[RMDB]
RNA sequence: GGGAACGACUCGAGUAGAGUCGAAAAUUGGAUAGUACCAGGCCCUUAGCAGGAUACCCACUUAAUGAGGGUCACCACAAGAGAAUGAUAAAAUAUUCAACGGGGGACUUUUCAUAUGGAACGAUAAUGUAGAUAUUUUUUUCGAAAAAUAUCUACAAAAAGAAACAACAACAACAAC
Reactivity to DMS in 0.01 (KOAc 150mM, MgCl2 10mM, bicine 150mM(pH8.5), 24C), signal-to-noise 2, nucleotides 027 to 126: u000u010g000g000a160u020a050g010u010a110c020c000a110g000g020c040c020c030u020u010a050g030c120a120g000g010a080u020a040c060c010c040a110c070u020u010a100a020u000g010a030g000g010g010u000c010a030c030c030a120c110a090a120g000a300g000a030a000u010g010a180u010a060a060a100a130u030a010u020u000c010a050a170c220g020g000g000g040g020a010c010u000u020u020u030c020a020u000a040u040g000g010a090a060c040g000a070u040a040a130
Reactivity to 2A3 in 0.01 (KOAc 150mM, MgCl2 10mM, bicine 150mM(pH8.5), 24C), signal-to-noise 2, nucleotides 027 to 126: u120u030g020g020a040u010a120g000u000a160c050c050a070g110g000c000c000c010u000u010a040g000c030a020g070g030a050u100a150c000c000c000a050c030u030u070a050a030u060g000a030g060g030g010u020c020a030c080c000a040c030a050a080g060a020g000a020a040u020g080a020u220a100a170a090a010u130a070u100u010c020a020a050c040g020g000g000g000g000a000c000u060u060u080u000c030a000u070a080u220g070g010a030a060c020g000a010u040a120a060